RNA sequence: GGGAACGACUCGAGUAGAGUCGAAAACACCGACUUGGCCUUGUCGACGUUGAGAAUCGGCAUCCCGUAAAUCGGGCUGGACGCGUCGUUGCGCGCCGCCGGGUUGGUCACGUCGUUGGCGCCGAUGGUGACUCGGCCGGUUCGCCGGCCGAGUCACAAAAGAAACAACAACAACAAC
Reactivity to 2A3 in 0.01 (KOAc 150mM, MgCl2 10mM, bicine 150mM(pH8.5), 24C), signal-to-noise 1, nucleotides 027 to 126: c000a060c030c010g030a010c000u030u140g000g000c000c060u010u080g070u110c040g000a040c050g000u000u130g180a060g000a300a000u000c000g000g070c000a090u030c000c000c000g010u110a070a000a000u070c110g000g000g000c100u080g070g050a170c040g000c020g000u100c030g050u110u300g000c040g000c000g010c000c030g050c050c000g000g000g080u100u100g000g030u020c010a000c010g000u000c000g000u000u120g050g000c060g000c040c000g020a090u160g090

An RNA of 177 nucleotides, treated with 2A3 and read out base by base.
Conditions: 150 mM KOAc, 10 mM MgCl2 and 150 mM bicine (pH 8.5), 24 C.
The data come from the RNA Mapping Database (RMDB), library OK1LIB.
2A3 is a SHAPE reagent: it acylates the 2'-hydroxyl of flexible nucleotides of all four kinds.